[RMDB]
Source information: The data come from the RNA Mapping Database (RMDB), library OK3TST. This 207-nucleotide RNA was probed chemically with 2A3.
RNA sequence: GGGAACGACUCGAGUAGAGUCGAAAAGUACUCGUGAACACUCACGUUCACUCGUACGAUCGAGUGAGAUCGUGAGUUCUCUCACACGAGUGAGAUCGAACACGAACGAGUUCGAGUGAGAACGAGAGUGUACACACGAUCACGAGAACGUGUUCGACUGGGGUGCAACAUUCGUGUUGCACCCCAGAAAAGAAACAACAACAACAAC
Reactivity to 2A3 in 0.01 (KOAc 150mM, MgCl2 10mM, bicine 150mM(pH8.5), 24C), signal-to-noise 1, nucleotides 027 to 156: g220u100a010c000u000c000g010u000g070a110a070c010a000c090u000c000a000c010g000u050u030c000a010c030u000c000g000u010a220c070g040a270u230c060g000a010g000u030g000a060g040a140u100c030g000u010g000a060g000u070u020c000u000c000u010c000a090c000a000c060g000a000g000u000g030a150g010a030u000c000g000a000a000c010a000c030g010a120a000c010g000a000g120u000u030c000g000a000g000u020g010a140g060a080a000c020g030a040g010a020g040u070g180u300a100c030a000c030a000c030g000a050u000c010a000c180g040a010g010a030a050c080g000u000g000u000u070c000g000a030

Description: 2A3 adducts were read by reverse transcription with SuperScript II with manganese. The reactions ran in a buffer of 150 mM KOAc, 10 mM MgCl2 and 150 mM bicine (pH 8.5), at 24 C.